Structure probing data (DMS and 2A3) for a 177-nucleotide construct. Reactivities are rounded to 0.1 and cut off at 0 and 3. For 2A3, 2,081 sequencing reads were counted. Conditions: 150 mM KOAc, 10 mM MgCl2 and 150 mM bicine (pH 8.5), 24 C. Source: RMDB library RFMREP, as collected in RNAgym.
RNA sequence: GGGAACGACUCGAGUAGAGUCGAAAAAGAGGCGCGUGUGCCUUUUCUGCACACUUGGUAUAGACUCGCACACAUGGUCAGUAGAGGUGCAUGUGCCUUUAAAGAAUAGCUUGUUCGCAAGCUAUUCCGUACAUUUGGUCUUCGGACCAAAUGUACGAAAAGAAACAACAACAACAAC
Reactivity to DMS in 0.01 (KOAc 150mM, MgCl2 10mM, bicine 150mM(pH8.5), 24C), signal-to-noise 2, nucleotides 027 to 126: a060g010a000g000g000c030g020c040g040u000g000u000g020c000c010u000u000u010u000c020u010g010c270a060c030a130c060u000u000g010g010u020a300u020a140g020a070c150u040c130g010c150a080c050a110c040a070u000g010g000u000c000a020g000u000a010g010a000g010g020u000g000c010a010u000g020u010g010c020c000u000u000u010a000a100a120g000a020a010u000a000g010c000u000u000g000u000u000c210g010c010a000a000g010c000u000a000u000u000c000
Reactivity to 2A3 in 0.01 (KOAc 150mM, MgCl2 10mM, bicine 150mM(pH8.5), 24C), signal-to-noise 2, nucleotides 027 to 126: a000g040a000g000g010c010g010c000g030u000g000u000g010c000c000u010u000u000u010c000u000g040c050a040c030a040c010u020u050g060g060u100a110u020a200g120a100c040u040c170g110c020a040c010a010c010a070u070g020g000u040c000a000g000u000a000g010a010g000g010u010g000c010a020u010g010u010g020c010c000u010u010u000a050a040a000g000a000a000u000a010g000c000u000u010g030u060u030c120g050c110a010a010g000c010u000a000u020u000c000